[RMDB]
RNA sequence: GGGAACGACUCGAGUAGAGUCGAAAAACGAGGUACGCCUCGAAAAUAUGACCGGUGUCAUAGCCUCUAGCACACAGAGGUCGCGUGGGUUCAACUCCCACCCUUUUCCGAGGGUAUCGGAAACCAAAAAACACAAUUUGGUUCGCCAAAUUGUGAAGCUUUUAAGUGAGUUCGCUCACUUAAAAGCAAAAGAAACAACAACAACAAC
Reactivity to DMS in 0.01 (KOAc 150mM, MgCl2 10mM, bicine 150mM(pH8.5), 24C), signal-to-noise 1, nucleotides 027 to 156: a110c010g000a050g040g010u000a060c110g010c020c040u000c000g020a000a080a090a000u010a010u000g010a060c000c070g000g050u020g040u000c010a070u000a110g000c050c000u020c020u010a150g010c150a160c230a050c170a050g000a050g040g000u000c050g000c010g040u010g020g010g010u000u010c000a150a300c020u000c000c010c000a060c000c170c040u000u000u040u000c010c000g000a040g000g000g000u000a020u000c040g000g000a020a070a110c020c070a000a060a010a050a100a090c000a010c000a000a020u000u000u000g000g000u000u000c300g040c000c000a030a000a000u000u020g050u000g010a040a060
Reactivity to 2A3 in 0.01 (KOAc 150mM, MgCl2 10mM, bicine 150mM(pH8.5), 24C), signal-to-noise 4, nucleotides 027 to 156: a000c010g000a010g010g010u040a030c160g110c020c010u010c010g020a060a030a010a010u030a030u030g000a010c030c040g110g060u220g000u160c020a020u010a010g000c010c000u000c020u040a080g100c110a030c020a010c010a160g010a010g010g000u000c030g000c010g030u010g000g000g000u020u030c010a010a010c020u000c000c000c000a010c010c000c000u090u170u020u000c010c010g000a010g020g010g060u120a060u010c000g010g000a020a010a010c030c020a050a050a020a080a080a000c000a000c000a020a000u010u000u000g000g020u040u040c080g020c050c000a000a000a000u000u000g000u000g000a020a010